[RMDB]
Source: RMDB library OK2TRN, as collected in RNAgym. The record gives the reactivity of an RNA of 177 nucleotides to 2A3 and DMS. For 2A3, 768 sequencing reads were counted. For 2A3 the reverse transcriptase was SuperScript II with manganese.
RNA sequence: GGGAACGACUCGAGUAGAGUCGAAAAUUACUGGGAUCACAGUAUGGGGAGGGGUGAUCAGAUAAUGAGGUUAUGGGAAUUAGAGAGGAGUAACCAGGGAUCAAGACUAGGAGUAAUAGAGGGGGUCAACUGAGGAAAGUUUCGACUUUCCUCAGUUAAAAGAAACAACAACAACAAC
Reactivity to 2A3 in 0.01 (KOAc 150mM, MgCl2 10mM, bicine 150mM(pH8.5), 24C), signal-to-noise 1, nucleotides 027 to 126: u130u030a020c040u020g000g000g080a060u180c020a020c010a070g160u100a160u220g010g010g000g080a100g060g000g020g000u040g020a010u070c020a000g010a100u260a150a030u150g040a000g000g050u060u080a050u100g050g030g080a030a020u070u060a070g040a020g000a020g190g030a010g010u000a010a050c060c020a040g010g070g010a030u070c030a050a000g000a130c030u010a000g000g020a010g080u060a040a030u040a090g070a070g000g000g000g000g010u050c100
Reactivity to DMS in 0.01 (KOAc 150mM, MgCl2 10mM, bicine 150mM(pH8.5), 24C), signal-to-noise 1, nucleotides 027 to 126: u020u000a060c050u000g000g000g000a080u040c060a120c040a120g010u000a010u000g010g020g000g000a130g000g000g010g030u000g000a030u000c030a080g000a130u000a090a100u000g000a100g050g000u000u000a100u010g040g010g010a080a070u020u010a130g010a090g020a030g030g000a120g030u000a060a030c050c090a100g010g000g010a050u010c090a010a100g000a110c100u000a030g000g000a070g000u010a020a160u000a030g020a130g020g000g000g020g020u000c110